The record gives the reactivity of an RNA of 207 nucleotides to 2A3 and DMS. Source: RMDB library M2RFPK, as collected in RNAgym. Conditions: 150 mM KOAc, 10 mM MgCl2 and 150 mM bicine (pH 8.5), 24 C. 2A3 adducts were read by reverse transcription with SuperScript II with manganese.
[RMDB]
RNA sequence: GGGAACGACUCGAGUAGAGUCGAAAACGGGGUUGGAUCCGACUCUCAUAGGCUCUCCAACCCAACUCCUACUCAAUACGUCCUCGUCGUACAGAACGGAAACAUGUUUUCCGAACAUCCGCGCUUGCAAACCUGCCAAAGUUCGCUUUGGCAGGAACAUAACGGUAUCGUUCGCGAUACCGUUAUGAAAAGAAACAACAACAACAAC
Reactivity to 2A3 in 0.01 (KOAc 150mM, MgCl2 10mM, bicine 150mM(pH8.5), 24C), signal-to-noise 5, nucleotides 027 to 156: c070g020g000g010g000u020u010g020g030a130u300c010c030g150a150c080u080c040u030c140a160u220a150g000g010c010u000c000u000c000c000a000a000c010c000c000a000a000c000u010c000c000u010a010c000u010c030a050a110u070a190c020g030u040c000c010u020c020g070u030c020g010u050a070c020a090g060a110a020c020g000g030a000a040a000c090a130u270g080u060u010u020u010c020c000g040a060a020c010a050u050c040c040g020c020g020c090u070u100g040c060a020a100a160c000c000u000g000c000c000a010a010a020g010u040u150c190g060c060u020u010u000g000g000c000a000g010g010a000a000
Reactivity to DMS in 0.01 (KOAc 150mM, MgCl2 10mM, bicine 150mM(pH8.5), 24C), signal-to-noise 2, nucleotides 027 to 156: c140g010g030g040g010u020u010g010g010a020u000c010c030g000a100c040u010c070u020c180a190u010a140g020g020c020u000c080u000c000c000a030a040c000c020c000a020a020c000u020c040c010u000a070c040u000c050a070a110u000a080c070g020u010c010c000u000c000g040u000c020g000u000a070c000a050g020a150a300c000g000g000a060a010a050c060a220u000g010u000u000u000u000c010c010g000a030a050c030a150u000c000c010g000c070g040c080u000u000g000c060a020a110a200c010c000u000g000c030c020a010a020a040g010u020u000c300g030c000u000u010u000g000g000c000a010g000g010a020a080